Chemical mapping of a 207-nucleotide RNA with 2A3 and DMS. Reactivities are rounded to 0.1 and cut off at 0 and 3.
RNA sequence: GGGAACGACUCGAGUAGAGUCGAAAAGGACUGGACCAGGACCACAGGUACCGCCGGACCCAUAUAAGGUACCAACCAGAAUAAGACAGAUACACAAUGGGCAGCACAGUGUAGCCAGUCAGAACCGCGUGCCUAGUCUACGGCACGAGCGAGCUAACCUUUUAAUUACUUUCGAGUAAUUAAAAGGAAAAGAAACAACAACAACAAC
Reactivity to 2A3 in 0.01 (KOAc 150mM, MgCl2 10mM, bicine 150mM(pH8.5), 24C), signal-to-noise 4, nucleotides 027 to 156: g080g010a040c050u070g000g020a020c040c060a060g020g050a060c040c010a050c080a070g000g010u030a040c000c000g010c010c020g050g050a070c000c000c030a010u070a030u020a090a050g030g000u030a030c000c020a030a070c030c030a060g090a110a110u180a160a010g050a040c040a050g080a070u070a060c030a020c020a070a120u070g020g020g000c020a020g010c030a030c030a050g010u020g010u060a010g060c040c020a020g020u050c020a000g050a060a010c020c010g030c000g000u000g010c000c010u060a050g110u100c090u140a050c060g000g000c010a000c000g000a030g040c040g030a030g010c020u060a020a070
Reactivity to DMS in 0.01 (KOAc 150mM, MgCl2 10mM, bicine 150mM(pH8.5), 24C), signal-to-noise 3, nucleotides 027 to 156: g030g030a160c000u000g000g010a150c070c060a080g040g010a260c030c030a050c020a090g010g010u000a040c000c010g040c070c040g030g000a110c020c030c020a130u000a120u010a110a120g000g010u000a030c000c010a040a100c050c030a200g000a080a070u000a060a090g010a100c040a070g010a100u000a070c040a100c040a060a140u010g010g020g060c060a080g000c040a050c030a110g030u000g000u000a050g010c020c010a060g030u000c040a090g010a100a100c020c000g010c000g050u000g020c020c010u000a210g020u010c060u010a150c180g000g030c010a050c000g000a010g020c030g010a140g040c040u000a100a210
The 2A3 profile rests on 3,279 reads. Source: RMDB library OK3TST, as collected in RNAgym. For DMS the reverse transcriptase was MarathonRT. For 2A3 the reverse transcriptase was SuperScript II with manganese. The reactions ran in a buffer of 150 mM KOAc, 10 mM MgCl2 and 150 mM bicine (pH 8.5), at 24 C.